Source: RMDB library M2PK50, as collected in RNAgym. Structure probing data (DMS and 2A3) for a 177-nucleotide construct. The reactions ran in a buffer of 150 mM KOAc, 10 mM MgCl2 and 150 mM bicine (pH 8.5), at 24 C. DMS adducts were read by reverse transcription with MarathonRT. The 2A3 profile rests on 4,015 reads.

[RMDB]
RNA sequence: GGGAACGACUCGAGUAGAGUCGAAAACAUCCAGUGUUCGCACUGGAUGAGAGGAAUGUGGAUCGGCAAACUACAUUCCAAAAGCUGAGCUCGAAAGAGCAACGAUUUCGUCGUUCGCGACGAAAAAAUCUAAAAGUGCUUUCGAGCACUUUUAGAUAAAAGAAACAACAACAACAAC
Reactivity to DMS in 0.01 (KOAc 150mM, MgCl2 10mM, bicine 150mM(pH8.5), 24C), signal-to-noise 3, nucleotides 027 to 126: c010a010u000c000c010a000g010u000g000u000u010c230g020c010a000c000u020g000g000a000u000g010a060g020a130g000g000a010a000u000g010u010g010g010a040u000c080g020g010c220a120a180a060c000u000a000c000a000u000u000c000c000a080a050a070a050g010c120u010g010a260g000c000u000c010g000a110a070a090g000a030g040c000a040a100c160g010a210u000u000u000c010g010u000c000g020u010u000c190g020c020g000a000c000g010a000a000a030a040a050
Reactivity to 2A3 in 0.01 (KOAc 150mM, MgCl2 10mM, bicine 150mM(pH8.5), 24C), signal-to-noise 2, nucleotides 027 to 126: c000a000u000c000c000a000g000u020g030u040u080c180g020c080a010c010u010g000g000a000u000g010a020g010a020g000g000a000a000u000g000u010g030g040a140u150c120g180g060c170a070a090a020c020u000a010c000a000u020u000c000c000a060a080a010a020g000c070u070g060a020g020c000u010c000g030a070a060a050g000a010g000c010a000a020c000g060a080u030u030u000c010g000u000c000g030u040u070c220g000c010g080a000c000g000a020a010a010a000a010